[RMDB]
RNA sequence: GGGAACGACUCGAGUAGAGUCGAAAAGCCAUCAAGGACCUGAUAUCAGGUAGUAUCUCGACACUGGACAUUCAUUCAGCAUCCGGAAGCUCGAUGAGCUUGUACUUAGGCGCUUGUCAUGAUUAUCGUUGUCCUUGCAUUUCGAUGCAAGGACAACAAAAGAAACAACAACAACAAC
Reactivity to 2A3 in 0.01 (KOAc 150mM, MgCl2 10mM, bicine 150mM(pH8.5), 24C), signal-to-noise 1, nucleotides 027 to 126: g030c000c000a100u080c110a020a120g070g010a060c000c010u000g020a060u080a080u300c010a000g030g010u010a030g040u040a060u030c080u020c060g010a020c020a000c050u040g000g000a000c020a080u120u050c030a010u140u080c020a060g000c010a080u000c020c010g090g080a050a020g000c010u040c050g160a160u110g010a000g010c000u100u060g010u050a060c030u050u030a040g050g000c020g010c040u000u100g080u030c060a040u180g060a060u160u250a060u150c110
Reactivity to DMS in 0.01 (KOAc 150mM, MgCl2 10mM, bicine 150mM(pH8.5), 24C), signal-to-noise 2, nucleotides 027 to 126: g020c000c010a140u000c120a130a020g010g020a110c020c000u010g000a210u030a130u000c020a040g010g020u000a090g040u000a130u000c050u000c140g010a120c090a060c010u000g020g000a050c130a100u000u020c070a080u000u000c100a050g050c060a120u000c010c090g000g030a160a070g030c100u000c010g040a050u000g010a030g050c010u000u000g020u010a060c080u000u000a070g000g030c100g010c020u000u000g000u000c050a000u000g020a030u000u000a080u000c150

Description
Chemical mapping of a 177-nucleotide RNA with 2A3 and DMS. Reactivities are rounded to 0.1 and cut off at 0 and 3. In probing experiments dimethyl sulfate is read out at A N1 and C N3, which are open when not base-paired. The RNA was probed in 150 mM KOAc, 10 mM MgCl2 and 150 mM bicine (pH 8.5) at 24 C. It was measured as part of the RMDB library OK2TRN. DMS adducts were read by reverse transcription with MarathonRT. 2A3 adducts were read by reverse transcription with SuperScript II with manganese. The 2A3 profile rests on 889 reads.